[RMDB]
RNA sequence: GGGAACGACUCGAGUAGAGUCGAAAAGACUGAUGUAGAGUUCGGUUGGGGCGACAAGUAUUUAGCUUGAGAUAGCUAAAUCACCUCGGUAUGAUUAGGGUGAGACCUAGGAACCGUAGGGGUAUUCAAUGCUGUAUUGCGUUCGCGCAAUACAGAAACUCAAGGUUUAGUUCGCUAAACCUUGAGUAAAAGAAACAACAACAACAAC
Reactivity to 2A3 in 0.01 (KOAc 150mM, MgCl2 10mM, bicine 150mM(pH8.5), 24C), signal-to-noise 5, nucleotides 027 to 156: g050a010c050u060g030a030u090g050u110a040g040a030g060u060u060c040g010g000u020u050g020g000g000g010c040g020a050c050a070a010g020u080a050u010u010u000a000g000c000u020u020g000a020g010a070u120a020g000c000u010a010a010a010u020c010a020c000c000u030c020g000g020u300a190u140g050a060u020u030a020g010g030g010u050g090a080g030a050c000c010u020a010g010g000a030a020c000c010g000u040a030g000g000g020g010u020a070u030u160c090a080a080u160g050c000u000g000u000a000u000u000g000c010g010u010u060c170g000c000g000c100a000a000u000a000c000a000g000a040a020
Reactivity to DMS in 0.01 (KOAc 150mM, MgCl2 10mM, bicine 150mM(pH8.5), 24C), signal-to-noise 2, nucleotides 027 to 156: g010a070c050u010g000a050u000g000u000a110g010a100g020u010u000c060g010g020u000u000g010g000g010g050c040g000a060c060a030a060g000u010a020u000u000u000a010g000c000u010u000g020a270g000a110u010a050g010c000u000a000a050a020u000c020a050c000c010u000c010g010g010u000a110u000g030a190u000u010a060g000g000g010u000g000a260g000a150c020c010u000a060g000g000a140a050c020c020g020u000a050g010g010g010g020u000a080u000u000c080a040a080u000g020c020u010g020u000a010u010u000g000c000g020u000u000c300g040c020g000c000a000a020u000a010c000a010g000a030a060

Source: RMDB library M2RFPK, as collected in RNAgym.
Chemical mapping of a 207-nucleotide RNA with 2A3 and DMS.
2A3 adducts were read by reverse transcription with SuperScript II with manganese.
Values cover nucleotides 27 to 156.
2A3 is a SHAPE reagent: it acylates the 2'-hydroxyl of flexible nucleotides of all four kinds.
The RNA was probed in 150 mM KOAc, 10 mM MgCl2 and 150 mM bicine (pH 8.5) at 24 C.